Conditions: 150 mM KOAc, 10 mM MgCl2 and 150 mM bicine (pH 8.5), 24 C.
Structure probing data (DMS and 2A3) for a 177-nucleotide construct.
For 2A3 the reverse transcriptase was SuperScript II with manganese.
Source: RMDB library TTRDEL, as collected in RNAgym.
For DMS, 4,962 sequencing reads were counted.
The 2A3 profile rests on 4,331 reads.
[RMDB]
RNA sequence: GGGAACGACUCGAGUAGAGUCGAAAAGAUAUGGAGUGGUUCAACAGCUAAGGUGGUCGGAAACGACCACUUAGACAUGAACCCUCCUAAGUCAAAACAUAGUUUGGACUUCGGUCCAAACUAUGAACCUAAGACAACAGUUCGCUGUUGUCUUAGGAAAAGAAACAACAACAACAAC
Reactivity to DMS in 0.01 (KOAc 150mM, MgCl2 10mM, bicine 150mM(pH8.5), 24C), signal-to-noise 5, nucleotides 027 to 126: g000a020u000a300u010g010g000a020g030u010g030g000u000u010c000a040a100c290a190g010c020u000a020a020g010g020u000g010g000u000c010g010g000a060a060a140c000g000a000c000c000a000c000u000u000a000g020a080c080a200u010g000a010a000c000c010c000u010c000c000u000a010a070g000u000c040a050a070a100a250c010a000u000a000g000u000u000u000g000g000a010c000u000u000c210g040g000u010c000c000a000a010a010c000u000a000u000g010a050a140
Reactivity to 2A3 in 0.01 (KOAc 150mM, MgCl2 10mM, bicine 150mM(pH8.5), 24C), signal-to-noise 2, nucleotides 027 to 126: g010a010u050a040u090g010g000a020g060u300g050g030u020u000c010a130a140c060a200g060c020u050a070a020g300g230u100g060g000u050c000g010g030a080a080a030c000g000a010c000c000a010c000u010u000a010g000a030c000a030u060g000a000a010c000c010c000u020c000c000u010a050a020g000u000c020a010a000a080a110c010a000u000a000g000u000u010u000g000g000a000c000u130u040c300g030g000u010c010c010a000a000a010c000u010a000u000g010a000a010